Description: An RNA of 207 nucleotides, treated with DMS and 2A3 and read out base by base. In probing experiments dimethyl sulfate is read out at A N1 and C N3, which are open when not base-paired. The DMS profile rests on 8,326 reads. As a SHAPE reagent, 2A3 marks flexible, mostly unpaired nucleotides at the ribose 2'-OH. For 2A3 the reverse transcriptase was SuperScript II with manganese. DMS adducts were read by reverse transcription with MarathonRT. The reactions ran in a buffer of 150 mM KOAc, 10 mM MgCl2 and 150 mM bicine (pH 8.5), at 24 C.

RNA sequence: GGGAACGACUCGAGUAGAGUCGAAAAGCUAGUCGGAGACGACUAGCAUCGAUCAGUUCGCUGAUCGUAAGGAGCAGUCAUACGCAGUCGACGCUCCGAUAGGCAUGGCAGACUGCGAUACUGUAAAAUCAGGAUAAUUAAUUAAUGAAGCCAUGCGGCUCAUACUAAUGUUCGCAUUAGUAUGAGCAAAAGAAACAACAACAACAAC
Reactivity to DMS in 0.01 (KOAc 150mM, MgCl2 10mM, bicine 150mM(pH8.5), 24C), signal-to-noise 4, nucleotides 027 to 156: g020c000u000a020g020u000c000g010g000a300g010a300c010g030a020c010u010a000g020c010a010u000c000g000a010u010c000a020g030u000u010c300g030c000u000g000a030u000c020g010u000a090a140g020g000a080g040c010a120g010u000c020a170u020a100c020g030c020a040g020u000c030g020a080c010g010c000u000c020c000g010a080u000a110g030g020c010a020u000g000g010c010a220g000a060c030u000g010c030g010a150u020a050c000u010g010u010a100a080a120a200u000c000a030g010g000a150u000a060a120u010u000a050a180u020u000a080a100u020g010a180a230g010c010c000a020u000g000c000g010
Reactivity to 2A3 in 0.01 (KOAc 150mM, MgCl2 10mM, bicine 150mM(pH8.5), 24C), signal-to-noise 8, nucleotides 027 to 156: g000c000u000a000g000u010c000g030g020a050g010a110c010g000a000c000u000a000g000c000a010u040c000g000a000u000c000a000g030u070u090c150g020c090u000g000a000u000c000g000u020a080a120g000g010a000g020c130a050g080u040c020a020u050a140c000g000c010a000g010u010c020g020a020c030g000c000u010c010c000g010a110u110a040g030g000c000a000u000g000g000c010a000g010a020c000u000g000c000g010a030u070a070c000u010g020u060a020a060a060a190u140c000a010g040g020a040u050a110a060u300u080a060a050u110u080a030a070u120g050a060a000g000c000c000a000u000g000c000g020